[RMDB]
RNA sequence: GGGAACGACUCGAGUAGAGUCGAAAAUGACACGAAAUCUGGUGGGACAACUGCGCCGCAAGUGAAUGCUGAGCCGUCACGCCAGAACGCGGAUUGGAGACAGUCUGCGGCGACUGACGGACCCAACGUCACUCCUGCAGUUCGCUGCAGGAGUGACAAAAGAAACAACAACAACAAC
Reactivity to 2A3 in 0.01 (KOAc 150mM, MgCl2 10mM, bicine 150mM(pH8.5), 24C), signal-to-noise 2, nucleotides 027 to 126: u090g130a010c010a000c120g070a040a120a160u070c080u050g060g000u000g000g070g060a040c040a050a100c250u190g010c080g020c050c040g040c050a080a030g120u190g140a160a060u050g020c050u130g000a020g140c010c000g000u000c000a000c000g000c020c000a050g010a020a000c000g000c220g000g000a000u020u010g010g000a000g090a020c000a000g030u050c000u040g000c000g010g000c010g050a110c070u010g010a030c000g000g000a000c000c000c000a030a000c070